[RMDB]
This 207-nucleotide RNA was probed chemically with DMS and 2A3.
The RNA was probed in 150 mM KOAc, 10 mM MgCl2 and 150 mM bicine (pH 8.5) at 24 C.
For 2A3, 5,554 sequencing reads were counted.
The DMS profile rests on 9,591 reads.
High 2A3 reactivity points to a flexible backbone, as in loops and unpaired stretches.
RNA sequence: GGGAACGACUCGAGUAGAGUCGAAAACGUACGUGGAGACACGUACGACGAGACUUCGGUCUCGAAUCGGGCGGAGAUUAGGCGCCCUCGUGUAAGGAGUCGGUUGUCGGCGAGCCAACGGACUCAAGAGCUUACACGACAUAUUAAGCCUGAUCGAGCUUCUGUAGUAAUUCGUUACUACAGAAGCAAAAGAAACAACAACAACAAC
Reactivity to DMS in 0.01 (KOAc 150mM, MgCl2 10mM, bicine 150mM(pH8.5), 24C), signal-to-noise 4, nucleotides 027 to 156: c030g010u000a010c000g080u000g000g000a300g000a300c010a010c000g020u000a000c020g010a140c030g010a190g010a040c020u000u010c280g040g010u000c010u000c010g000a030a030u000c030g000g020g020c000g000g010a170g000a040u010u000a040g020g040c030g020c050c020c010u000c010g030u000g010u000a030a020g010g000a050g010u000c030g000g040u000u000g010u000c030g000g000c130g010a220g020c200c020a030a120c020g000g000a050c010u010c010a070a100g010a260g030c010u000u000a020c020a070c000g000a020c030a070u000a110u000u000a100a120g010c020c000u000g000a030u000c010g010a240
Reactivity to 2A3 in 0.01 (KOAc 150mM, MgCl2 10mM, bicine 150mM(pH8.5), 24C), signal-to-noise 3, nucleotides 027 to 156: c010g010u010a000c000g000u000g010g010a050g010a030c000a000c010g000u000a010c000g000a020c000g010a010g010a000c010u040u080c200g120g000u020c010u000c000g000a030a100u140c050g000g000g000c010g000g040a180g000a150u010u010a000g010g000c000g000c000c000c020u020c000g000u000g000u000a000a000g030g010a000g000u000c070g050g000u050u010g010u010c020g030g090c180g030a010g000c010c000a000a000c020g090g000a000c000u000c010a020a020g100a020g070c000u000u000a000c000a000c000g010a000c000a000u250a040u050u190a060a020g030c010c000u010g000a000u000c000g010a010